This 177-nucleotide RNA was probed chemically with DMS and 2A3. For 2A3, 1,374 sequencing reads were counted. The RNA was probed in 150 mM KOAc, 10 mM MgCl2 and 150 mM bicine (pH 8.5) at 24 C. Source: RMDB library OK2TST, as collected in RNAgym.
RNA sequence: GGGAACGACUCGAGUAGAGUCGAAAAUUGAGGCAGCUAUGGCCGCUUCAAAUUAUCAUUUAGCUGCGAAUUCCUUAAACGAAGCAGGUUCAUUUUUCGUUAUCCGUGGAGUUUUUUCAAUAACAGAACCAUAUCACGUAUUCGUACGUGAUAUGGUAAAAGAAACAACAACAACAAC
Reactivity to DMS in 0.01 (KOAc 150mM, MgCl2 10mM, bicine 150mM(pH8.5), 24C), signal-to-noise 5, nucleotides 027 to 126: u000u010g010a080g000g010c000a030g010c010u000a080u020g030g030c070c060g010c020u020u000c030a020a070a080u010u010a090u010c110a100u000u000u000a070g010c020u000g020c020g010a100a130u000u000c010c010u010u000a050a080a100c090g010a090a080g010c060a060g020g000u000u000c070a080u000u000u000u000u000c060g010u000u010a060u000c050c080g000u000g010g000a190g000u000u000u000u000u000u000c080a080a050u020a070a070c130a100g010a110
Reactivity to 2A3 in 0.01 (KOAc 150mM, MgCl2 10mM, bicine 150mM(pH8.5), 24C), signal-to-noise 2, nucleotides 027 to 126: u030u100g020a020g050g070c010a000g030c020u090a110u260g140g030c030c030g000c030u040u080c030a040a080a080u260u120a150u100c060a070u040u100u150a020g010c020u000g000c060g070a020a070u060u020c010c000u070u070a050a080a020c030g010a040a000g000c090a050g070g010u110u060c040a100u060u150u010u130u090c020g030u040u030a060u060c070c010g000u060g040g030a120g010u110u050u010u050u060u180c080a090a020u100a100a030c070a060g170a060